An RNA of 177 nucleotides, treated with DMS and 2A3 and read out base by base. DMS adducts were read by reverse transcription with MarathonRT. The RNA was probed in 150 mM KOAc, 10 mM MgCl2 and 150 mM bicine (pH 8.5) at 24 C. Values cover nucleotides 27 to 126. It was measured as part of the RMDB library VIROID.
RNA sequence: GGGAACGACUCGAGUAGAGUCGAAAACGAUGUCGAAGCAAUGGCACAGUCCUAGGCAUUGUUCCAGCAUCUGAUGUAGAAGCAAUGGCGCAGUCCUAGGCAUCGACGGUGUCGAAGCAAUGGCGUACGCCUGGAUUGAGUUCGCUCAAUCCAGGCGAAAAGAAACAACAACAACAAC
Reactivity to DMS in 0.01 (KOAc 150mM, MgCl2 10mM, bicine 150mM(pH8.5), 24C), signal-to-noise 1, nucleotides 027 to 126: c210g040a180u010g000u000c010g000a050a300g000c070a050a110u020g010g020c010a010c010a080g000u040c000c000u000a010g010g000c190a020u000u000g020u000u000c000c020a110g000c000a050u000c000u000g000a070u010g000u000a050g000a050a080g020c010a080a100u020g020g030c040g020c000a010g040u010c010c000u000a000g000g010c220a050u000c150g000a100c140g000g040u020g000u010c000g010a110a300g000c090a020a150u000g000g000c020g090u000a070
Reactivity to 2A3 in 0.01 (KOAc 150mM, MgCl2 10mM, bicine 150mM(pH8.5), 24C), signal-to-noise 2, nucleotides 027 to 126: c060g070a080u100g010u030c030g140a110a000g020c010a000a100u110g000g000c030a020c000a040g070u080c010c000u010a000g000g010c060a000u040u020g000u030u000c000c000a000g000c000a020u000c000u220g230a300u250g110u300a020g010a040a020g020c070a130a300u140g000g000c000g000c000a000g000u000c030c000u020a000g020g010c010a100u040c060g110a060c020g040g040u010g000u030c010g000a010a000g010c010a010a050u090g030g010c030g020u050a120